[RMDB]
The data come from the RNA Mapping Database (RMDB), library OK2TRN. An RNA of 177 nucleotides, treated with DMS and 2A3 and read out base by base. For DMS the reverse transcriptase was MarathonRT. The 2A3 profile rests on 1,210 reads. Reactivities are rounded to 0.1 and cut off at 0 and 3.

RNA sequence: GGGAACGACUCGAGUAGAGUCGAAAAUAGACUCUAGCACUAGUGCUAGGAUCUCAUGGCGUACUAGAGAGUCUGAGUACACGUACCUAGGAUCUCAGGUACUGCCAUGGUACCUAGGUCUAGGUACUGCCGGACAACUAUUCGUAGUUGUCCGGCAAAAAGAAACAACAACAACAAC
Reactivity to DMS in 0.01 (KOAc 150mM, MgCl2 10mM, bicine 150mM(pH8.5), 24C), signal-to-noise 2, nucleotides 027 to 126: u010a040g010a020c030u000c000u020a020g000c020a110c110u000a170g040u000g000c010u000a020g000g000a050u000c010u000c190a100u000g010g030c050g000u000a030c010u000a060g000a180g000a080g020u000c020u000g020a120g010u010a030c040a100c180g000u000a000c000c000u000a010g000g000a010u000c010u000c270a020g000g010u000a000c000u000g000c120c290a040u010g010g040u000a010c000c000u000a020g010g020u000c030u000a000g010g030u000a010c010
Reactivity to 2A3 in 0.01 (KOAc 150mM, MgCl2 10mM, bicine 150mM(pH8.5), 24C), signal-to-noise 1, nucleotides 027 to 126: u130a000g000a010c000u000c010u000a010g070c010a020c070u100a070g060u010g030c000u010a040g040g020a050u000c050u010c030a090u110g070g020c060g040u040a010c040u040a010g100a010g000a010g200u000c030u020g070a000g020u090a010c040a020c110g030u040a010c000c010u030a070g190g050a060u020c050u020c090a010g010g010u020a000c030u030g090c130c100a040u100g000g000u010a000c000c000u010a020g010g010u040c000u000a020g030g000u000a000c010